[RMDB]
RNA sequence: GGGAACGACUCGAGUAGAGUCGAAAACGCUGGGCGUAGAGUCCGAUGAAAUGGAGCCUCCUGAAGCGCGCACGGGAGGCGAUGAAAUGGAGGACCUACGCCUGUGCUGAAGCGCGCACGGCAACCGAAAGGUGCGAUCUAGCCAUUCGUGGCUAAAUGUUAAGUCAUGAUUCGUCAUGACUUAACAAAAAGAAACAACAACAACAAC
Reactivity to DMS in 0.01 (KOAc 150mM, MgCl2 10mM, bicine 150mM(pH8.5), 24C), signal-to-noise 1, nucleotides 027 to 156: c060g000c060u000g010g010g060c020g050u000a030g020a230g050u000c010c000g020a290u030g010a120a060a120u010g000g010a290g000c000c000u000c000c000u000g010a070a090g020c000g010c050g010c020a300c000g010g000g000a050g000g010c000g020a030u000g040a040a090a160u000g010g000a210g020g000a040c020c000u010a000c010g000c000c020u000g000u000g020c040u000g020a080a060g000c090g010c000g000c040a300c020g000g000c000a140a110c050c030g000a090a170a050g000g070u000g020c000g000a140u010c080u000a030g000c000c010a060u010u030c150g040u000g010g000c010u000a020a050a100
Reactivity to 2A3 in 0.01 (KOAc 150mM, MgCl2 10mM, bicine 150mM(pH8.5), 24C), signal-to-noise 4, nucleotides 027 to 156: c030g020c010u020g000g000g000c010g000u010a010g030a120g050u020c030c010g020a170u230g020a060a180a110u230g110g100a040g000c000c000u040c000c010u050g050a200a080g000c000g000c000g000c000a010c020g010g000g010a010g010g000c020g000a040u050g030a020a100a040u190g080g030a030g030g000a000c000c000u000a000c000g000c000c000u000g000u000g000c010u020g030a100a020g000c000g000c000g000c000a010c000g020g000c020a020a020c000c000g060a090a050a040g030g000u010g000c010g010a030u010c060u100a000g010c010c010a020u080u070c210g110u060g000g000c000u020a080a090a040
Conditions: 150 mM KOAc, 10 mM MgCl2 and 150 mM bicine (pH 8.5), 24 C.
An RNA of 207 nucleotides, treated with DMS and 2A3 and read out base by base.
For DMS the reverse transcriptase was MarathonRT.
As a SHAPE reagent, 2A3 marks flexible, mostly unpaired nucleotides at the ribose 2'-OH.
It was measured as part of the RMDB library RNAMAK.